[RMDB]
RNA sequence: GGGAACGACUCGAGUAGAGUCGAAAAUGGAGUUUGCCAGGUUUAAUCAUAUUAAUAAUAAUUAUGCAAUGCAGUUUGUCAAGCGUCAGGCAUGAGCCAUUAUCAAUUGAGCAGAUUGGACUUGAGGCAUAUUAAUGACCUUCGGGUCAUUAAUAUGAAAAGAAACAACAACAACAAC
Reactivity to 2A3 in 0.01 (KOAc 150mM, MgCl2 10mM, bicine 150mM(pH8.5), 24C), signal-to-noise 2, nucleotides 027 to 126: u090g020g000a070g040u020u060u170g110c020c000a030g000g050u040u020u140a100a050u040c010a040u150a100u300u040a220a030u210a220a000u120a170a080u120u140a070u100g010c020a040a010u030g010c020a000g010u090u180u090g060u090c080a150a050g030c050g130u020c040a030g040g080c000a010u060g010a020g110c060c030a010u020u010a030u070c080a010a130u110u020g030a020g000c010a020g060a090u050u080g020g000a000c020u000u030g040a060g010g030
Reactivity to DMS in 0.01 (KOAc 150mM, MgCl2 10mM, bicine 150mM(pH8.5), 24C), signal-to-noise 3, nucleotides 027 to 126: u010g020g000a170g020u010u000u010g020c030c020a100g010g010u000u010u000a060a050u010c010a070u020a300u010u000a060a070u020a160a090u010a060a130u030u000a070u010g000c030a150a060u000g010c030a090g010u010u010u000g010u000c110a050a110g000c090g010u000c070a040g010g010c030a010u000g010a100g010c050c130a040u000u000a040u010c070a030a070u000u000g010a060g010c160a080g000a060u000u000g010g010a040c040u000u000g010a080g010g020
The data come from the RNA Mapping Database (RMDB), library OK2TRN. This 177-nucleotide RNA was probed chemically with 2A3 and DMS. For DMS, 2,524 sequencing reads were counted. As a SHAPE reagent, 2A3 marks flexible, mostly unpaired nucleotides at the ribose 2'-OH. Reactivities are rounded to 0.1 and cut off at 0 and 3.